[RMDB]
RNA sequence: GGGAACGACUCGAGUAGAGUCGAAAAGAUAUGGAGGUCCUACAGGCAACAGCUAUAGGUCGGAAACGACCUGAUAGACAUGCCUGAAGGACCUCCUAAGUCAAAGCUACGACUUCGGUCGUAGCAAGUUAUCCUUAGAGUUCGCUCUAAGGAUAACAAAAGAAACAACAACAACAAC
Reactivity to 2A3 in 0.01 (KOAc 150mM, MgCl2 10mM, bicine 150mM(pH8.5), 24C), signal-to-noise 7, nucleotides 027 to 126: g020a020u060a040u140g000g000a000g000g000u000c000c010u010a050c010a010g010g000c040a190a050c060a300g020c020u010a010u010a020g000g000u010c020g020g020a060a060a040c010g000a000c010c010u020g030a010u000a000g040a070c060a110u300g000c000c010u010g000a010a000g000g010a000c000c000u000c000c000u010a000a000g000u000c010a000a020a060g010c000u000a000c000g020a000c010u060u130c300g140g000u000c000g000u000a000g000c000a000a000
Reactivity to DMS in 0.01 (KOAc 150mM, MgCl2 10mM, bicine 150mM(pH8.5), 24C), signal-to-noise 9, nucleotides 027 to 126: g010a040u000a300u010g000g000a010g020g010u000c000c000u000a160c020a010g010g010c010a070a090c300a200g000c000u000a010u010a020g000g010u000c000g010g000a100a090a220c000g010a010c000c000u000g010a010u000a010g000a040c090a300u000g000c000c000u000g010a150a010g010g000a000c000c000u000c000c000u000a000a070g000u000c030a110a110a170g000c000u000a000c000g010a010c000u000u020c240g050g010u000c000g010u000a000g020c010a020a020